[RMDB]
RNA sequence: GGGAACGACUCGAGUAGAGUCGAAAAGAUAUGGAAAGCCAGGGUAGGGAGCGUAUACAUCGGAAACGAUGUGAUACGCGACGAUCUACCUGGCUUUCCUAAGUCAAAAGACCACUUCGGUGGUCAAGCCAAGUUAAUACUUCGGUAUUAACUUGGCAAAAGAAACAACAACAACAAC
Reactivity to 2A3 in 0.01 (KOAc 150mM, MgCl2 10mM, bicine 150mM(pH8.5), 24C), signal-to-noise 1, nucleotides 027 to 126: g000a020u060a030u080g000g010a000a000a000g020c020c040a070g150g070g160u070a000g000g030g040a020g060c010g010u000a000u000a000c000a000u000c010g010g040a070a030a000c010g000a010u010g030u070g110a010u000a000c000g020c010g030a030c000g000a010u000c010u000a000c000c000u000g000g020c000u000u000u000c000c000u000a010a000g000u000c000a000a000a010a060g000a000c000c000a010c010u090u080c260g140g020u020g000g000u000c010a000a000
Reactivity to DMS in 0.01 (KOAc 150mM, MgCl2 10mM, bicine 150mM(pH8.5), 24C), signal-to-noise 3, nucleotides 027 to 126: g000a060u000a300u000g000g010a000a010a010g000c000c000a020g000g000g030u020a010g000g010g010a050g010c000g000u020a000u000a010c010a000u000c000g010g000a160a070a220c000g010a010u000g020u000g000a020u000a000c000g000c000g000a030c220g000a000u020c000u000a010c000c000u000g010g000c000u000u000u000c010c000u000a000a130g010u000c030a080a120a240a160g000a020c010c000a020c000u000u010c230g010g000u000g000g000u000c000a050a100

This 177-nucleotide RNA was probed chemically with 2A3 and DMS. Source: RMDB library TTRDES, as collected in RNAgym. The reactions ran in a buffer of 150 mM KOAc, 10 mM MgCl2 and 150 mM bicine (pH 8.5), at 24 C.